[RMDB]
RNA sequence: GGGAACGACUCGAGUAGAGUCGAAAAAAUUUGGAGAGAGACCCGCCUCAGUUUUAUAAGUUGGGUUGCUCGUAUUAUGAAGUAGCAAAUCAGUGCAAAGUCUAUCUCGACUAUUAUUUCACCGGAGCAACGUAUGAUAUUUCGAUAUCAUACGUUGAAAAGAAACAACAACAACAAC
Reactivity to 2A3 in 0.01 (KOAc 150mM, MgCl2 10mM, bicine 150mM(pH8.5), 24C), signal-to-noise 2, nucleotides 027 to 126: a020a070u160u140u070g070g000a070g000a020g010a010g000a040c000c010c090g000c010c010u020c060a020g030u000u000u240u210a160u080a230a010g020u080u080g010g000g010u000u010g030c020u030c030g020u000a140u120u100a090u170g050a110a020g010u120a000g010c000a000a080a080u130c040a070g010u000g070c000a010a080a030g020u010c010u020a080u030c020u000c030g040a050c040u060a050u240u010a070u010u060u030c100a120c060c050g020g020a010g130
Reactivity to DMS in 0.01 (KOAc 150mM, MgCl2 10mM, bicine 150mM(pH8.5), 24C), signal-to-noise 4, nucleotides 027 to 126: a070a060u010u000u000g000g000a180g000a060g010a080g020a060c020c170c300g000c070c030u000c090a070g020u010u010u000u020a090u030a080a040g010u010u000g020g010g010u010u000g000c020u000c040g010u000a110u010u010a110u010g010a070a080g010u010a030g010c030a020a050a080u010c130a070g000u000g010c060a080a100a110g010u010c010u000a080u010c020u010c050g010a080c080u000a060u000u000a060u000u000u000c030a100c040c000g000g010a100g010
Overview: Conditions: 150 mM KOAc, 10 mM MgCl2 and 150 mM bicine (pH 8.5), 24 C. This 177-nucleotide RNA was probed chemically with 2A3 and DMS. The 2A3 profile rests on 1,834 reads. Values are in units of 0.01, from 0 to 300, in steps of 10. Source: RMDB library OK2TST, as collected in RNAgym.